This 177-nucleotide RNA was probed chemically with DMS and 2A3. 2A3 adducts were read by reverse transcription with SuperScript II with manganese. The reactions ran in a buffer of 150 mM KOAc, 10 mM MgCl2 and 150 mM bicine (pH 8.5), at 24 C. For DMS the reverse transcriptase was MarathonRT. The DMS profile rests on 2,265 reads. For 2A3, 1,794 sequencing reads were counted.

[RMDB]
RNA sequence: GGGAACGACUCGAGUAGAGUCGAAAAGAAAAAGUCGUCGAGUCCGGAGAAUAUCGAGAGACGAAAGUCUCGAGUAGUGGAUACGAUCCGGAGAGUAUCGACUACAAGAUAUCGAGACGACGAAAAAGGGUAAAUAUUCGUUCGCGAAUAUUUACCCAAAAGAAACAACAACAACAAC
Reactivity to DMS in 0.01 (KOAc 150mM, MgCl2 10mM, bicine 150mM(pH8.5), 24C), signal-to-noise 2, nucleotides 027 to 126: g000a070a120a080a090a130g000u000c000g000u000c010g020a240g000u000c040c000g030g000a050g050a290a080u020a020u000c020g010a170g000a000g060a000c000g020a090a060a160g000u000c000u000c000g000a070g030u040a120g010u020g000g030a010u000a000c010g010a230u030c020c060g000g010a000g030a070g000u000a000u000c000g020a020c110u020a070c230a230a100g000a080u000a040u000c020g050a140g000a020c000g000a020c000g000a020a070a140a090a010
Reactivity to 2A3 in 0.01 (KOAc 150mM, MgCl2 10mM, bicine 150mM(pH8.5), 24C), signal-to-noise 2, nucleotides 027 to 126: g060a010a160a000a000a000g060u000c000g000u000c000g010a040g090u000c000c010g060g010a060g040a100a050u010a000u080c080g010a040g000a000g000a160c010g060a020a020a010g000u000c000u000c000g000a010g000u100a010g020u010g110g000a000u020a000c030g040a080u010c020c020g000g010a020g000a000g030u010a010u000c020g110a030c010u020a000c000a000a110g000a050u050a020u010c000g000a000g000a020c000g000a000c010g030a060a000a000a000a010